[RMDB]
RNA sequence: GGGAACGACUCGAGUAGAGUCGAAAAGAAGCAGAUGCGGGCAUACCGGGGUCUCAGAUUCCCGUAAAACACUGAAUUCAAAUAGUCGCAAACGACGAAACUUACGCUUUAGCCGCUUAAGGCUAGCCGUUGCAGCAGUCGGUCAAUGGGCUGUGUGGUACUCGUAAUGGUUCGCCAUUACGAGUACAAAAGAAACAACAACAACAAC
Reactivity to 2A3 in 0.01 (KOAc 150mM, MgCl2 10mM, bicine 150mM(pH8.5), 24C), signal-to-noise 1, nucleotides 027 to 156: g020a030a000g000c010a000g000a100u150g080c000g000g040g000c030a130u120a160c040c050g000g000g000g000u000c000u000c110a000g020a060u050u060c000c000c020g060u100a000a000a080a000c090a010c040u040g030a050a080u120u130c030a060a080a000u120a150g030u000c070g000c090a050a150a120c020g010a000c000g030a080a000a000c040u120u080a020c020g050c030u110u170u120a000g030c030c000g030c090u270u200a060a040g000g000c000u000a010g000c030c000g030u010u050g000c000a020g000c000a030g000u050c080g020g000u100c010a000a080u090g000g050g000c040u020g000u000g010u010g130

Chemical mapping of a 207-nucleotide RNA with 2A3. Source: RMDB library ARCHII, as collected in RNAgym. For 2A3 the reverse transcriptase was SuperScript II with manganese. For 2A3, 565 sequencing reads were counted.